An RNA of 207 nucleotides, treated with 2A3 and DMS and read out base by base. Source: RMDB library M2RFPK, as collected in RNAgym. For DMS the reverse transcriptase was MarathonRT.
RNA sequence: GGGAACGACUCGAGUAGAGUCGAAAAUUGCGCCUCCGAUUCGCCGUCGGCAUUUCCCCAGCAGCCAUGACCUACCAGGCUGCGGUGCGGCUCGCCGCACAGGUCAUCCCUCAUCGGGCGCGUCGUGGAUAGGGCUAUACUUUCGAGUAUAGCCCAAGGAAUAAAUCGUAUUCGUACGAUUUAUUCCAAAAGAAACAACAACAACAAC
Reactivity to 2A3 in 0.01 (KOAc 150mM, MgCl2 10mM, bicine 150mM(pH8.5), 24C), signal-to-noise 4, nucleotides 027 to 156: u110u080g010c020g010c010c000u050c020c020g020a040u110u140c080g020c070c040g050u010c010g000g010c060a050u040u050u040c020c010c000c010a030g000c000a000g000c010c010a140u160g020a050c000c030u130a210c120c050a030g000g000c000u000g000c000g000g000u030g000c000g000g000c030u060c140g140c020c000g000c000a010c020a020g010g020u010c010a140u110c020c010c020u100c030a130u070c070g020g010g000c010g000c010g030u070c040g030u080g020g020a070u050a180g010g000g000c000u000a000u000a000c010u020u080u100c220g040a010g000u000a000u000a000g010c000c000c000a000a000
Reactivity to DMS in 0.01 (KOAc 150mM, MgCl2 10mM, bicine 150mM(pH8.5), 24C), signal-to-noise 2, nucleotides 027 to 156: u000u010g020c010g030c010c000u010c020c010g010a110u000u010c070g040c040c090g000u010c040g030g030c090a150u000u000u000c010c020c000c050a110g020c050a040g010c000c010a140u010g010a110c070c020u000a100c110c080a150g010g040c020u000g040c030g020g050u000g000c000g040g000c100u000c220g050c010c030g000c020a010c060a030g010g030u020c060a170u010c030c010c020u000c090a120u000c080g030g030g020c060g030c060g020u010c030g010u010g010g020a130u000a140g000g080g040c000u000a010u000a010c000u000u000u000c220g020a060g020u000a020u000a010g010c000c000c000a000a030